An RNA of 207 nucleotides, treated with 2A3 and read out base by base.
[RMDB]
RNA sequence: GGGAACGACUCGAGUAGAGUCGAAAAGGGGUCCUUCCCUGAGUCCGAGGUUUGCGCUGACUACACUGAAGCCUCCACGGUGUAGGUGGAGCAAACUCCCCACCGGACUCUGGGAAGGACGGAGGCACCCAAAGAUAGGGCGUUCGCGCCCUAUCAACGAUGCAUAGCGGUUCGCCGCUAUGCAUCGAAAAGAAACAACAACAACAAC
Reactivity to 2A3 in 0.01 (KOAc 150mM, MgCl2 10mM, bicine 150mM(pH8.5), 24C), signal-to-noise 1, nucleotides 027 to 156: g000g000g020g010u060c010c000u000u000c000c010c030u030g010a000g000u000c000c000g020a030g000g070u040u020u030g020c100g090c300u300g060a010c000u000a000c020a000c000u020g050a120a020g020c000c000u010c010c000a030c000g000g030u010g010u000a020g000g050u050g000g070a130g000c000a000a020a020c030u120c050c070c030c020a070c030c030g010g010a000c000u000c000u000g020g000g000a000a010g000g010a000c000g000g000a000g000g010c000a040c010c010c000a110a070a000g000a000u020a000g020g000g010c030g050u080u100c190g010c000g000c120c000c010u040a000u030c000a000a000